[RMDB]
RNA sequence: GGGAACGACUCGAGUAGAGUCGAAAAGCACGGAGACAUGCACGGAAACGUCGACGGAGGCCCCAUGUCGAACGUGGCUGUCCGAGGCCUCCGUAUUUGACUGGUAAUUCAGUCGUUAGGACAGCUACCGGGAGGUAGGAUUCGUCCUACCUCCCGGAAAAGAAACAACAACAACAAC
Reactivity to 2A3 in 0.01 (KOAc 150mM, MgCl2 10mM, bicine 150mM(pH8.5), 24C), signal-to-noise 2, nucleotides 027 to 126: g020c010a020c050g090g030a090g020a040c020a020u050g000c050a020c080g030g000a050a170a050c100g130u150c030g070a020c000g010g000a000g010g000c000c000c000c010a020u040g050u020c060g050a120a110c050g050u060g040g010c000u000g000u000c000c000g010a040g000g000c000c010u040c040c010g000u000a090u120u070u150g000a020c000u020g020g020u140a120a050u240u170c010a010g020u010c000g040u050u090a020g020g000a000c000a010g010c000u020a030
Reactivity to DMS in 0.01 (KOAc 150mM, MgCl2 10mM, bicine 150mM(pH8.5), 24C), signal-to-noise 2, nucleotides 027 to 126: g000c080a030c070g010g000a170g010a020c040a030u000g050c260a080c030g010g010a070a100a090c180g000u000c060g000a010c010g010g000a040g030g010c010c030c090c050a070u000g020u010c060g020a120a130c140g010u000g030g000c000u000g000u000c000c010g000a190g010g010c000c000u030c020c000g000u000a000u000u020u010g000a000c000u000g010g000u020a110a160u010u020c000a000g010u000c010g000u010u000a090g010g000a010c000a010g020c010u000a110
An RNA of 177 nucleotides, treated with 2A3 and DMS and read out base by base.
2A3 adducts were read by reverse transcription with SuperScript II with manganese.
The DMS profile rests on 1,279 reads.
It was measured as part of the RMDB library OK2TRN.
The RNA was probed in 150 mM KOAc, 10 mM MgCl2 and 150 mM bicine (pH 8.5) at 24 C.
Reactivities are given for positions 27 through 126.